RNA sequence: GGGAACGACUCGAGUAGAGUCGAAAAGGCUGAAGGACAACGGGAUGAAAACCUCUUUCAGCAGGGACGAAGCGUGAGUGACGAUACCUGAAGAAGAAGCACCGGCUAACAACGUACCAACAGCCGCAAUAAUAUUGAUAUUCGUAUCAAUAUUAUUAAAAGAAACAACAACAACAAC
Reactivity to 2A3 in 0.01 (KOAc 150mM, MgCl2 10mM, bicine 150mM(pH8.5), 24C), signal-to-noise 9, nucleotides 027 to 126: g020g000c010u010g000a030a010g020g010a010c030a090a020c080g010g010g060a090u120g120a100a060a060a070c010c010u020c000u020u070u040c040a090g000c000a000g030g010g000a020c020g020a040a020g020c020g030u140g070a130g030u070g020a040c010g010a040u200a260c020c000u030g020a050a040g010a010a000g010a020a000g040c020a020c040c000g010g010c020u080a030a020c050a020a010c050g050u070a160c000c000a010a020c000a010g000c000c000g000c000
Reactivity to DMS in 0.01 (KOAc 150mM, MgCl2 10mM, bicine 150mM(pH8.5), 24C), signal-to-noise 9, nucleotides 027 to 126: g000g030c000u000g000a050a280g000g000a070c070a170a070c050g000g000g010a120u030g010a110a060a070a130c160c050u000c010u000u010u010c030a060g010c010a030g000g000g000a290c030g000a070a270g000c010g010u050g000a170g000u000g000a300c010g000a080u030a230c010c000u000g000a070a090g000a030a020g000a040a030g010c080a140c050c010g000g010c100u020a070a080c170a030a120c120g000u010a080c010c010a030a300c030a020g010c000c000g010c140